[RMDB]
Annotation
This 177-nucleotide RNA was probed chemically with 2A3 and DMS. Reactivities are given for positions 27 through 126. The DMS profile rests on 5,470 reads. It was measured as part of the RMDB library 15KREP.
RNA sequence: GGGAACGACUCGAGUAGAGUCGAAAACUUGAGAUUCUUGUUGACCUUCCGGAGCUCCCUCUCGAGUUCCUCCUUUCUUCUUCUUCCAUCGAUCCACUUUCCGAGUGCCUCUUCUCUCCCCCUCCGGCCUUGUAUGUAAGUUCGCUUACAUACAAGGAAAAGAAACAACAACAACAAC
Reactivity to 2A3 in 0.01 (KOAc 150mM, MgCl2 10mM, bicine 150mM(pH8.5), 24C), signal-to-noise 2, nucleotides 027 to 126: c020u040u080g030a040g070a160u160u090c040u130u090g060u060u080g070a060c010c000u040u040c090c020g070g000a050g030c040u000c030c020c020u030c010u010c010g040a040g020u040u030c010c000u010c010c000u000u090u050c000u050u010c000u040u000c000u040u000c030c000a060u060c010g050a040u000c020c020a030c060u050u080u030c020c020g030a020g070u040g030c040c000u040c000u060u020c000u010c010u020c030c000c000c000c000u000c000c000g010g040
Reactivity to DMS in 0.01 (KOAc 150mM, MgCl2 10mM, bicine 150mM(pH8.5), 24C), signal-to-noise 3, nucleotides 027 to 126: c040u000u000g010a100g010a100u000u000c030u000u000g010u000u000g010a140c080c040u000u000c040c060g020g000a110g000c070u000c030c030c060u000c020u000c040g010a090g010u000u000c080c030u000c040c030u000u000u000c020u000u000c050u000u000c040u000u000c040c040a060u010c070g000a080u010c040c040a060c060u000u000u000c030c040g000a120g010u000g010c050c020u000c020u000u000c010u000c030u000c000c000c000c020c000u000c010c020g010g010